[RMDB]
RNA sequence: GGGAACGACUCGAGUAGAGUCGAAAAGGGGCAAAGGAGCAAGCUGGGCUCGCCCAGCCUGUUCCUGCACCGUGACUUCCCGUGAACUGCAGUCGUCUCCCCCCUGUGGGGAAGGCGAGCCACCCAGGGACGUGUCUCGGUUCAUCCAACCAAUCGACUCGUAUACCAAGUUCGCUUGGUAUACGAGAAAAGAAACAACAACAACAAC
Reactivity to 2A3 in 0.01 (KOAc 150mM, MgCl2 10mM, bicine 150mM(pH8.5), 24C), signal-to-noise 3, nucleotides 027 to 156: g040g010g000g030c130a210a140a030g010g000a000g020c000a000a000g000c010u000g000g020g000c090u120c210g170c000c000c000a000g000c000c000u010g000u000u000c000c010u000g020c000a000c000c000g000u020g000a010c020u070u020c080c000c000g040u050g030a090a070c060u080g000c070a100g120u010c010g000u010c030u010c020c000c010c000c000c020u130g080u300g000g000g030g000a030a020g010g000c000g000a010g000c010c020a050c030c040c050a100g010g000g010a030c100g130u100g030u010c010u000c020g010g000u040u070c010a060u000c030c040a030a060c010c050a030a080u120c060g070a060
Reactivity to DMS in 0.01 (KOAc 150mM, MgCl2 10mM, bicine 150mM(pH8.5), 24C), signal-to-noise 2, nucleotides 027 to 156: g000g010g000g020c080a080a130a070g010g010a030g030c000a000a020g030c000u010g020g010g030c080u010c300g050c000c000c010a040g000c000c000u020g030u010u010c000c010u000g040c150a030c000c010g020u000g000a070c060u000u000c010c010c010g020u010g020a060a040c060u000g020c000a070g000u000c010g010u000c010u000c000c000c010c010c000c030u020g010u000g000g010g010g020a000a010g020g010c040g000a060g030c070c020a090c030c050c040a250g010g010g020a050c230g020u000g020u000c030u000c020g000g000u010u000c060a100u010c070c020a130a090c020c040a050a300u000c060g000a290

This 207-nucleotide RNA was probed chemically with 2A3 and DMS. For 2A3, 2,672 sequencing reads were counted. Source: RMDB library ARCHII, as collected in RNAgym.